[RMDB]
RNA sequence: GGGAACGACUCGAGUAGAGUCGAAAAUGUGUGCCAGCUUGAACAUACCAGAAGUAGAGAAGAUUUCAGACAGGCAAGAAGCCUUCGCCAACCUGCUGACUUCAGUUUUGGAGGGGGGAGGGACAUCAGCUCAGUUGGUCUUCGGACCAACUGAGCUAAAAGAAACAACAACAACAAC
Reactivity to 2A3 in 0.01 (KOAc 150mM, MgCl2 10mM, bicine 150mM(pH8.5), 24C), signal-to-noise 1, nucleotides 027 to 126: u210g150u070g000u080g020c060c110a100g000c180u080u000g050a020a020c030a000u160a060c070c000a070g040a040a000g070u010a080g030a060g060a060a190g000a110u000u090u000c130a130g070a220c080a060g000g060c120a010a130g020a130a030g060c090c090u070u070c070g030c020c020a080a100c000c000u000g010c000u000g070a100c040u060u110c110a080g000u000u000u060u300g080g000a060g000g010g000g000g000g000a160g000g000g000a000c000a110u050c060